[RMDB]
Chemical mapping of a 177-nucleotide RNA with DMS and 2A3.
Conditions: 150 mM KOAc, 10 mM MgCl2 and 150 mM bicine (pH 8.5), 24 C.
RNA sequence: GGGAACGACUCGAGUAGAGUCGAAAAAGCGACUACGGUCGCAACAGGCCUUUGGCAGAGGAGGGCUGUUCUUCCCUUGUGUUUUGUGACUGGGAGGAACUAGCCUUCUCUCUGCUUAGGAGUGGAAUUUGGUUGUAUUAUUCGUAAUACAACCAAAAAAAGAAACAACAACAACAAC
Reactivity to DMS in 0.01 (KOAc 150mM, MgCl2 10mM, bicine 150mM(pH8.5), 24C), signal-to-noise 7, nucleotides 027 to 126: a100g010c010g010a010c000u000a090c190g050g010u000c000g020c000a070a060c090a080g000g010c010c000u000u020u010g010g010c010a020g000a010g000g000a020g000g000g010c010u000g000u000u000c010u000u000c000c000c000u010u020g010u010g010u010u020u030u030g010u030g010a040c010u000g000g010g010a020g000g000a010a010c010u030a020g010c000c000u000u000c000u020c000u000c000u000g000c010u000u000a010g000g000a070g010u010g010g010a110a140
Reactivity to 2A3 in 0.01 (KOAc 150mM, MgCl2 10mM, bicine 150mM(pH8.5), 24C), signal-to-noise 6, nucleotides 027 to 126: a000g000c000g020a000c000u040a030c200g140g000u010c020g030c000a000a010c020a020g110g060c000c000u080u100u110g040g000c000a010g000a000g000g010a000g000g010g000c000u000g000u000u000c000u000u000c000c000c000u040u090g110u020g040u060u110u100u190g300u150g060a030c030u020g010g010g000a010g010g000a000a000c010u070a010g000c010c010u000u000c000u010c010u000c000u000g000c000u000u000a000g000g000a030g030u090g040g130a160a170